[RMDB]
RNA sequence: GGGAACGACUCGAGUAGAGUCGAAAAAGUCCUACCGUUCCUUCUGGCAGGGGUCCGCAGGCUCCUGUUUCUACUUUCUGUGGCGGCUCUCCAGGCACACUCACAGCCCUGGUGCAACACAGUCUACUGCAGCAUUACUGGCUGUGGCGGGGGACAACGUUAUGGUGUCGUUCGCGACACCAUAACGAAAAGAAACAACAACAACAAC
Reactivity to 2A3 in 0.01 (KOAc 150mM, MgCl2 10mM, bicine 150mM(pH8.5), 24C), signal-to-noise 1, nucleotides 027 to 156: a000g070u080c050c000u110a300c000c020g000u050u050c020c050u100u210c110u110g080g000c030a020g010g000g040g000u040c030c110g130c150a190g030g040c000u050c000c000u080g010u010u000u090c030u100a160c050u070u100u070c020u030g030u000g000g070c090g040g040c090u120c010u000c080c020a000g000g050c050a000c010a040c120u100c050a060c030a070g090c050c000c000u000g000g000u050g010c020a070a060c000a020c000a020g000u070c030u050a120c030u050g000c010a020g000c030a020u070u200a250c110u190g050g050c000u000g010u030g030g010c010g000g000g000g000g000a000c000a020a000